[RMDB]
RNA sequence: GGGAACGACUCGAGUAGAGUCGAAAACGGAAGCAUUAAAAUCAUUCGAGCUAGUCAAUGCGUGGCGUGUCUCUCCGCAGCGUGUUGGCGAAUGUAAAGAGUGACUAAGCAUGUAGUACCGAGGAUGAUAAGAGCAAUUCGUUCGCGAAUUGCUCAAGAAUUGGCAAGAGUUCGCUCUUGCCAAUUCAAAAGAAACAACAACAACAAC
Reactivity to DMS in 0.01 (KOAc 150mM, MgCl2 10mM, bicine 150mM(pH8.5), 24C), signal-to-noise 2, nucleotides 027 to 156: c050g000g010a120a250g000c060a020u000u000a080a080a090a130u010c010a060u000u020c000g010a300g010c010u000a120g010u000c010a020a010u020g000c010g000u000g000g100c020g050u010g000u010c180u010c080u000c300c000g020c020a030g000c020g000u000g010u000u000g000g020c050g030a100a090u000g000u000a060a120a150g010a100g080u010g010a020c060u010a090a210g010c170a080u000g000u010a030g020u000a100c030c000g030a160g000g000a130u000g010a150u000a090a200g000a050g030c000a010a020u010u020c020g020u010u020c300g000c050g030a020a010u000u010g020c000u000c000a020a090
Reactivity to 2A3 in 0.01 (KOAc 150mM, MgCl2 10mM, bicine 150mM(pH8.5), 24C), signal-to-noise 3, nucleotides 027 to 156: c030g010g020a120a060g000c010a020u080u000a090a060a030a070u040c020a010u040u040c020g010a000g030c030u050a020g020u000c000a000a020u000g020c000g010u040g060g000c030g020u140g090u040c050u020c020u040c090c010g010c010a020g010c000g000u030g000u010u000g010g000c000g010a030a020u110g010u060a080a110a050g010a010g020u020g020a010c010u030a000a060g090c040a040u040g020u050a060g070u050a080c020c050g030a070g120g010a070u160g030a040u120a210a140g000a000g000c000a000a000u000u000c020g010u040u050c110g000c000g150a000a000u000u000g020c000u000c000a010a000
The record gives the reactivity of an RNA of 207 nucleotides to DMS and 2A3. The RNA was probed in 150 mM KOAc, 10 mM MgCl2 and 150 mM bicine (pH 8.5) at 24 C. Reactivities are given for positions 27 through 156. For 2A3 the reverse transcriptase was SuperScript II with manganese. The data come from the RNA Mapping Database (RMDB), library M2RFPK.